[RMDB]
RNA sequence: GGGAACGACUCGAGUAGAGUCGAAAACGAAACCGUGCCCGAUCUCGUGCCCGAUCACCGCCCCGAUCCCGCCGUAGUUGGCGGCCUCGUCGGCCUGCGGAUCGAAAAAUGGUGGCUGUAAAAUCGCCCUGAGUACCAGGUUCGCCUGGUACUCAGGAAAAGAAACAACAACAACAAC
Reactivity to DMS in 0.01 (KOAc 150mM, MgCl2 10mM, bicine 150mM(pH8.5), 24C), signal-to-noise 1, nucleotides 027 to 126: c070g010a270a100a060c070c090g010u050g030c020c010c030g020a130u090c000u000c180g040u000g000c190c000c010g000a050u050c050a010c130c070g040c010c050c000c010g030a100u010c070c060c020g020c050c000g000u040a090g090u000u000g030g050c000g000g000c070c020u010c300g000u060c060g010g000c040c050u080g000c130g000g000a010u000c020g000a000a030a100a090a010u000g010g040u020g000g030c070u040g010u000a090a000a230a070u010c110g000c130
Reactivity to 2A3 in 0.01 (KOAc 150mM, MgCl2 10mM, bicine 150mM(pH8.5), 24C), signal-to-noise 2, nucleotides 027 to 126: c030g000a080a000a000c080c010g060u120g040c010c000c010g010a110u000c020u020c050g070u080g030c050c010c070g020a040u010c040a060c020c020g050c070c000c000c010g010a000u030c000c000c000g040c000c010g050u130a110g020u100u070g010g040c000g020g000c010c020u180c040g050u030c040g020g000c020c010u010g000c000g020g020a000u040c010g070a190a160a050a000a000u090g080g000u060g000g000c050u010g020u130a000a060a000a080u110c050g090c000
An RNA of 177 nucleotides, treated with DMS and 2A3 and read out base by base.
For DMS the reverse transcriptase was MarathonRT.
DMS (dimethyl sulfate) methylates the pairing face of unpaired adenines and cytosines.
Reactivities are given for positions 27 through 126.
Source: RMDB library OK1LIB, as collected in RNAgym.
For 2A3, 849 sequencing reads were counted.